[RMDB]
RNA sequence: GGGAACGACUCGAGUAGAGUCGAAAAGAUAUGGACUGAGGCGACGAUCGUGUGGAUCGGAAACGAUCCCACGGGAGCCUUGGUCCUAAGUCAAAGCUUACAGUGUAGUUCGCUACACUGUAAGCAAGGAGCUAUAAAACUUCGGUUUUAUAGCUCCAAAAGAAACAACAACAACAAC
Reactivity to DMS in 0.01 (KOAc 150mM, MgCl2 10mM, bicine 150mM(pH8.5), 24C), signal-to-noise 2, nucleotides 027 to 126: g010a010u000a300u010g000g000a010c000u010g010a000g000g010c010g010a100c240g010a020u000c010g020u000g010u040g030g010a000u000c000g000g000a050a090a120c000g000a000u000c000c000c000a010c010g000g000g000a050g010c000c000u000u000g000g000u000c000c000u010a010a050g010u010c010a110a090a160g000c000u000u000a010c010a000g020u000g000u000a010g020u000u010c240g010c000u010a000c000a000c010u000g000u000a000a000g000c000a030a030
Reactivity to 2A3 in 0.01 (KOAc 150mM, MgCl2 10mM, bicine 150mM(pH8.5), 24C), signal-to-noise 3, nucleotides 027 to 126: g000a010u090a060u130g000g010a000c010u010g000a000g010g030c020g050a300c010g000a230u060c010g000u010g140u300g030g000a000u000c000g040g010a040a050a010c020g000a010u000c010c000c000a010c000g010g010g000a000g010c010c000u010u000g000g000u000c000c000u000a060a000g010u000c040a100a020a070g010c000u010u000a000c010a000g000u010g000u010a010g020u030u070c280g010c150u000a010c000a000c000u000g000u000a000a000g000c000a000a010
The record gives the reactivity of an RNA of 177 nucleotides to DMS and 2A3.
Values cover nucleotides 27 to 126.
DMS adducts were read by reverse transcription with MarathonRT.
It was measured as part of the RMDB library TTRDEL.
The RNA was probed in 150 mM KOAc, 10 mM MgCl2 and 150 mM bicine (pH 8.5) at 24 C.
The DMS profile rests on 2,443 reads.
2A3 adducts were read by reverse transcription with SuperScript II with manganese.